The record gives the reactivity of an RNA of 177 nucleotides to DMS and 2A3. Values cover nucleotides 27 to 126. The reactions ran in a buffer of 150 mM KOAc, 10 mM MgCl2 and 150 mM bicine (pH 8.5), at 24 C. For 2A3 the reverse transcriptase was SuperScript II with manganese. For DMS the reverse transcriptase was MarathonRT. The DMS profile rests on 936 reads.
RNA sequence: GGGAACGACUCGAGUAGAGUCGAAAACGAAGCGCGCGUAUUCCAAAUUUGUUUAAAAAACGAGCAGGGGCAACUGGACUGAAUGCAAUAGUGAUCAAUACUUCAACUGUCGGCGGGACAUCUCCCCGUAUAGUAUCAGCUUCGGCUGAUACUAUACAAAAGAAACAACAACAACAAC
Reactivity to DMS in 0.01 (KOAc 150mM, MgCl2 10mM, bicine 150mM(pH8.5), 24C), signal-to-noise 1, nucleotides 027 to 126: c050g010a070a070g000c070g020c040g010c000g010u000a170u000u000c040c030a100a160a100u000u010u030g000u000u000u010a000a080a080a110a100a040c060g000a050g030c080a040g040g010g010g000c050a030a070c050u020g000g000a050c090u030g020a060a030u010g030c080a030a070u010a060g010u000g020a050u010c080a040a090u020a090c070u010u000c090a050a100c110u000g020u000c020g020g020c040g020g000g010a040c050a040u020c070u010c020c000c040c200
Reactivity to 2A3 in 0.01 (KOAc 150mM, MgCl2 10mM, bicine 150mM(pH8.5), 24C), signal-to-noise 1, nucleotides 027 to 126: c050g070a080a020g000c000g000c030g000c050g070u040a110u070u100c020c000a070a100a060u170u080u080g060u010u110u020a130a160a050a020a020a020c020g010a020g000c020a060g030g050g000g000c000a050a000c050u050g030g080a030c030u010g020a080a040u020g020c030a090a090u020a090g030u040g050a050u050c050a110a000u050a200c060u090u060c010a100a070c050u030g010u050c050g020g010c010g000g000g010a010c020a020u010c020u010c000c010c010c000